[RMDB]
RNA sequence: GGGAACGACUCGAGUAGAGUCGAAAAGGCGAUGCCUCGUCCUCAUACCCAACUCCUAUUCCGGCACGUCCACGUCGUGCAGAGCGGUAACAUGCGUUACUAGGGGUGCAAGAGCUCUUUUUGAGGAGGAGCUCUUUUUGCUGCACUAGUUGCAUCACAUUCACAUAAGCUUCGGCUUAUGUGAAUGAAAAGAAACAACAACAACAAC
Reactivity to DMS in 0.01 (KOAc 150mM, MgCl2 10mM, bicine 150mM(pH8.5), 24C), signal-to-noise 2, nucleotides 027 to 156: g040g040c020g020a130u010g020c050c000u000c020g000u010c030c000u000c060a080u010a130c020c020c020a100a070c030u010c000c010u000a110u000u000c050c010g040g050c030a020c010g000u000c030c300a150c090g000u010c010g030u000g030c000a120g010a120g020c040g010g000u000a050a030c030a150u000g020c130g000u000u010a040c000u000a040g000g000g020g000u000g020c100a030a030g000a010g020c000u000c000u000u010u030u010u050g000a250g040g000a060g010g020a020g000c000u000c000u000u000u000u000u000g020c030u000g020c010a050c110u000a190g000u000u000g000c020a180u000c010a300
Reactivity to 2A3 in 0.01 (KOAc 150mM, MgCl2 10mM, bicine 150mM(pH8.5), 24C), signal-to-noise 3, nucleotides 027 to 156: g040g010c060g060a050u190g100c030c070u020c010g080u090c020c000u060c000a070u150a140c020c010c010a040a030c030u050c000c010u080a100u170u070c080c000g070g000c010a000c030g010u000c110c040a110c130g160u130c010g000u050g000c000a000g030a010g040c080g030g000u040a020a020c020a070u200g020c050g030u050u010a020c010u020a020g030g000g010g000u010g020c010a010a000g000a010g000c000u010c000u020u080u080u090u290g180a140g010g060a000g010g000a000g010c000u010c000u010u070u000u010u030g000c010u030g010c000a020c040u020a030g030u060u040g030c010a030u090c040a020